An RNA of 207 nucleotides, treated with DMS and 2A3 and read out base by base. Conditions: 150 mM KOAc, 10 mM MgCl2 and 150 mM bicine (pH 8.5), 24 C. Reactivities are given for positions 27 through 156. Source: RMDB library M2RFPK, as collected in RNAgym. DMS adducts were read by reverse transcription with MarathonRT. The 2A3 profile rests on 1,759 reads.

RNA sequence: GGGAACGACUCGAGUAGAGUCGAAAAGGGUGAGACCUAGGAACCGUAGGGGUAUUCUCAAAGGAAGCUUUUGCAGUGACGACCAUGUAAGUGGGAUAUAACAACAGAACUCGUAUGAGUAGCCUAAUAAAUCGGACCUUCUUCGGAAGGUCCGAAACCAUUAGAUCUUCUUCGGAAGAUCUAAUGGAAAAGAAACAACAACAACAAC
Reactivity to DMS in 0.01 (KOAc 150mM, MgCl2 10mM, bicine 150mM(pH8.5), 24C), signal-to-noise 1, nucleotides 027 to 156: g000g000g010u000g000a090g000a060c040c010u000a110g030g020a030a040c040c040g020u000a130g030g000g030g040u000a070u000u000c050u000c030a080a080a160g020g000a110a060g000c060u030u010u000u030g000c050a110g000u000g030a120c040g000a100c030c010a060u010g010u000a040a110g030u000g010g000g000a120u000a070u000a120a070c040a130a070c070a060g010a090a030c020u010c050g030u010a090u020g040a080g020u000a070g020c030c060u000a010a060u020a020a070a120u000c010g040g000a000c020c010u010u010c000u010u000c300g030g000a020a000g020g020u000c000c000g010a000a010a070
Reactivity to 2A3 in 0.01 (KOAc 150mM, MgCl2 10mM, bicine 150mM(pH8.5), 24C), signal-to-noise 2, nucleotides 027 to 156: g010g000g000u050g010a080g030a020c010c030u050a040g080g020a050a050c050c060g060u090a060g000g000g040g000u070a070u110u110c040u010c040a050a070a020g030g010a040a020g020c020u000u040u080u080g010c010a020g040u020g070a030c070g010a000c020c020a020u100g040u110a090a050g020u060g020g010g040a010u050a000u030a150a020c050a020a010c000a030g070a060a030c040u030c050g050u160a090u170g000a010g040u010a030g010c000c000u060a110a090u070a110a150a040u040c000g000g000a000c000c000u000u000c000u010u040c070g080g000a000a000g000g000u000c000c000g000a000a000a000